[RMDB]
RNA sequence: GGGAACGACUCGAGUAGAGUCGAAAAUAGCUGACGUUCGCGUCAGCUAAAAGCACCAAAACCUCCUGGCGGUGCGGCCCCGGCCCCGCCGGGAAGGCCGCCAACUCGAUGGGUUCGCCCAUCGAAACCCCCUACAUAGAUUCGUCUAUGUAGGGGGAAAAGAAACAACAACAACAAC
Reactivity to 2A3 in 0.01 (KOAc 150mM, MgCl2 10mM, bicine 150mM(pH8.5), 24C), signal-to-noise 2, nucleotides 027 to 126: u040a000g000c000u000g010a000c000g020u040u040c290g020c000g090u000c010a000g000c000u000a000a000a000a000g000c020a070c080c020a000a050a110a180c010c030u050c000c030u020g020g000c010g000g030u080g230c020g020g100c010c000c010c000g030g010c010c030c070c180g030c010c000g000g000g000a010a010g010g030c020c000g040c020c000a020a020c050u000c000g000a000u000g040g000g000u010u030c160g050c040c000c000a000u000c000g000a010a000a010
Reactivity to DMS in 0.01 (KOAc 150mM, MgCl2 10mM, bicine 150mM(pH8.5), 24C), signal-to-noise 2, nucleotides 027 to 126: u010a010g020c000u000g020a010c000g010u020u010c200g050c000g020u000c000a010g030c000u000a000a020a100a150g000c180a170c040c030a080a090a120a260c040c010u000c040c020u000g010g010c010g040g010u010g010c020g010g000c130c000c020c040g000g000c020c080c030c050g010c000c020g000g000g010a040a090g010g030c050c030g020c040c080a070a100c160u000c010g020a010u000g000g000g010u000u000c190g000c010c000c000a010u010c000g000a000a070a140